[RMDB]
RNA sequence: GGGAACGACUCGAGUAGAGUCGAAAAAAAGAUAUGGAGCUUAGACAUGCGAUGAAGAUAUGAUGACCAAGCUCGGAAACGAGCUUGCAAGUAUUGGAAGUCGCAACAGCUAAGCUCCUAAGUCAAACAUAUAAACGGGCUUCGGCCCGUUUAUAUGAAAAGAAACAACAACAACAAC
Reactivity to DMS in 0.01 (KOAc 150mM, MgCl2 10mM, bicine 150mM(pH8.5), 24C), signal-to-noise 1, nucleotides 027 to 126: a110a000a060g010a090u000a300u000g010g000a020g020c000u000u000a010g000a020c050a270u000g040c000g040a010u000g000a300a200g000a000u010a000u000g000a060u040g040a250c300c010a010a000g000c000u000c000g010g000a060a100a240c000g000a000g000c010u000u000g010c010a020a120g000u000a000u000u000g000g000a130a230g000u000c000g040c000a000a010c270a160g000c020u000a000a010g000c000u000c000c000u000a000a050g000u000c050a090a110a220